An RNA of 177 nucleotides, treated with DMS and 2A3 and read out base by base. For DMS the reverse transcriptase was MarathonRT. For 2A3 the reverse transcriptase was SuperScript II with manganese.
[RMDB]
RNA sequence: GGGAACGACUCGAGUAGAGUCGAAAAGACUACCACUUCAACUCUUAAUAAUAGAUUGUAGUGGCUAUGCUUGUGGGAUAGAGUGAUUUUUGCCAUGAUCUGAAGAGGGAGGUUUAUUGUGUCCUCCUUAUGUGCUUCUUUUCGAAGAAGCACAUAAAAAAGAAACAACAACAACAAC
Reactivity to DMS in 0.01 (KOAc 150mM, MgCl2 10mM, bicine 150mM(pH8.5), 24C), signal-to-noise 8, nucleotides 027 to 126: g000a160c080u020a160c010c000a010c000u000u010c000a010a020c140u010c010u000u000a100a130u040a140a110u020a010g010a040u000u000g010u000a010g010u000g000g000c250u020a020u010g010c040u000u000g020u010g000g000g010a060u010a050g010a060g000u020g000a090u010u000u010u010u000g000c030c040a060u020g000a090u000c050u000g000a120a090g000a110g010g000g000a010g010g000u000u020u010a090u020u010g010u000g010u000c000c000u000c010c020
Reactivity to 2A3 in 0.01 (KOAc 150mM, MgCl2 10mM, bicine 150mM(pH8.5), 24C), signal-to-noise 9, nucleotides 027 to 126: g040a030c040u050a020c010c000a010c000u010u010c010a030a060c050u000c010u090u130a110a080u140a220a060u110a280g020a030u000u020g010u010a010g000u000g010g000c020u090a080u130g010c010u070u050g020u060g060g030g030a040u060a120g060a050g050u090g100a160u040u040u070u130u120g050c020c020a040u060g050a070u050c050u110g090a080a020g040a080g090g010g010a010g020g020u020u030u050a130u060u070g020u000g020u010c000c000u000c010c000